The data come from the RNA Mapping Database (RMDB), library OK3TST. An RNA of 207 nucleotides, treated with DMS and 2A3 and read out base by base. For DMS, 2,822 sequencing reads were counted. For 2A3 the reverse transcriptase was SuperScript II with manganese. Values cover nucleotides 27 to 156. Conditions: 150 mM KOAc, 10 mM MgCl2 and 150 mM bicine (pH 8.5), 24 C.
RNA sequence: GGGAACGACUCGAGUAGAGUCGAAAAAAAUGCAUCUACCUAGCUGAAGAAAACGCACAGCUUCGAGACGCACUCUUAGACGCGAAACUACAGCUAGGCGUUAUCGCACUCGACAACCAGGAACCACAAGCCAAUUCAGGCGAAACCAGCGAGGAAAAAGUGGCAUAUAAUUCGUUAUAUGCCACUUAAAAGAAACAACAACAACAAC
Reactivity to DMS in 0.01 (KOAc 150mM, MgCl2 10mM, bicine 150mM(pH8.5), 24C), signal-to-noise 2, nucleotides 027 to 156: a050a040a090u020g020c000a090u020c050u000a040c000c000u010a040g060c000u010g010a130a130g000a080a090a100a150c080g000c010a140c050a100g030c040u000u000c070g010a110g010a100c100g000c130a060c060u010c090u010u000a070g050a100c100g000c000g060a160a080a210c050u000a260c010a030g010c010u000a100g010g000c000g000u000u000a030u010c080g080c060a100c050u000c010g000a210c050a080a150c050c030a140g020g030a060a130c040c010a040c100a070a130g040c050c030a050a220u020u000c130a040g060g010c020g000a070a060a030c040c040a110g010c030g020a060g000g000a110a100a070
Reactivity to 2A3 in 0.01 (KOAc 150mM, MgCl2 10mM, bicine 150mM(pH8.5), 24C), signal-to-noise 3, nucleotides 027 to 156: a000a010a010u100g000c010a030u040c030u110a060c000c000u000a000g010c020u030g080a200a020g030a040a100a010a000c020g000c010a090c030a130g030c000u040u040c020g030a020g010a080c040g010c210a160c030u030c000u010u030a020g020a050c060g020c000g020a040a050a030c010u070a050c010a000g010c000u000a000g000g070c010g020u030u040a100u150c080g000c020a030c010u060c010g020a050c020a070a060c010c050a070g040g020a030a070c020c020a040c110a120a000g000c010c010a000a080u260u100c030a130g000g010c020g030a060a000a000c020c030a030g070c020g010a030g000g060a080a120a000